This 177-nucleotide RNA was probed chemically with DMS.
RNA sequence: GGGAACGACUCGAGUAGAGUCGAAAAAAGAUAUGGAACGAGGUGCCAGGCUUACCCUGCCGAUGAAAGCUCUCGGAAACGAGAGCUGGAGGCAGGUAAGCCGGUAAUUCCUCGUUCCUAAGUCAAACCGGGAUAAAUAGUUCGCUAUUUAUCCCGGAAAAGAAACAACAACAACAAC
Reactivity to DMS in 0.01 (KOAc 150mM, MgCl2 10mM, bicine 150mM(pH8.5), 24C), signal-to-noise 1, nucleotides 027 to 126: a120a090g000a000u030a300u000g000g000a010a000c000g020a000g000g050u010g000c040c000a260g060g000c020u000u000a000c110c070c030u000g010c000c000g000a060u010g000a110a200a030g000c000u000c010u000c010g010g020a060a130a190c000g010a000g000a020g000c010u000g020g010a030g010g020c000a010g020g010u000a000a010g010c010c040g010g020u000a010a080u030u010c000c000u000c000g010u000u010c000c000u000a070a080g000u000c020a090a100a260

Conditions: 150 mM KOAc, 10 mM MgCl2 and 150 mM bicine (pH 8.5), 24 C.